[RMDB]
RNA sequence: GGGAACGACUCGAGUAGAGUCGAAAACUCCGUAGCGCAUUUUUGUUAGUGCGUCGGAGAAGGUUCACAGACUGUAAGGGAAGGGGUUCGCACUUGUGUGCGGGCUUAAGAGACAGUCGGUCCCUCUGUGAGAGCAGAGUUCCGGGUUUGAGGAAGGCGAACAGAUGCUGUUCGCAGCAUCUGUUCGAAAAGAAACAACAACAACAAC
Reactivity to 2A3 in 0.01 (KOAc 150mM, MgCl2 10mM, bicine 150mM(pH8.5), 24C), signal-to-noise 4, nucleotides 027 to 156: c000u000c000c000g030u090a070g050c010g000c010a020u040u060u040u100u280g240u270u160a030g000u010g010c020g030u060c010g010g020a010g010a040a010g040g010u110u110c070a040c020a130g010a030c010u040g040u150a050a080g040g020g050a030a020g050g000g000g000u030u010c000g020c030a030c050u240u270g090u120g000u010g300c000g000g000g020c000u020u020a030a020g020a010g010a020c010a010g000u030c000g010g020u070c010c020c000u010c020u020g030u020g030a090g010a010g040c030a010g020a000g070u050u030c030c010g000g010g040u050u080u100g030a030g010g050a040a010g030g000

Conditions: 150 mM KOAc, 10 mM MgCl2 and 150 mM bicine (pH 8.5), 24 C. Structure probing data (2A3) for a 207-nucleotide construct.